[RMDB]
RNA sequence: GGGAACGACUCGAGUAGAGUCGAAAACGCAACUUCAGGUAACAAAGCACCAGUAAUUUCGCUGCCUUCGUAUAAUGCGGGCAUCUGGUCACGAGAUAAGUCGCAAGCCUGCAGCAUGACGUCACUCGCCCGACUGCGGUUUCGACCGCAGUCGGGCAAAAGAAACAACAACAACAAC
Reactivity to 2A3 in 0.01 (KOAc 150mM, MgCl2 10mM, bicine 150mM(pH8.5), 24C), signal-to-noise 1, nucleotides 027 to 126: c010g000c020a010a010c000u060u140c050a000g000g060u110a000a270c000a050a250a000g030c090a060c000c040a000g000u150a000a150u170u280u210c140g000c110u000g000c000c040u070u180c060g020u090a130u090a120a120u290g000c040g040g000g000c000a000u030c000u070g000g010u150c070a000c000g030a050g050a000u060a230a200g010u170c000g000c000a000a080g000c000c000u000g000c000a000g000c000a000u000g010a050c000g000u050c000a000c000u020c000
Structure probing data (2A3) for a 177-nucleotide construct.
It was measured as part of the RMDB library OK1LIB.
2A3 adducts were read by reverse transcription with SuperScript II with manganese.
The reactions ran in a buffer of 150 mM KOAc, 10 mM MgCl2 and 150 mM bicine (pH 8.5), at 24 C.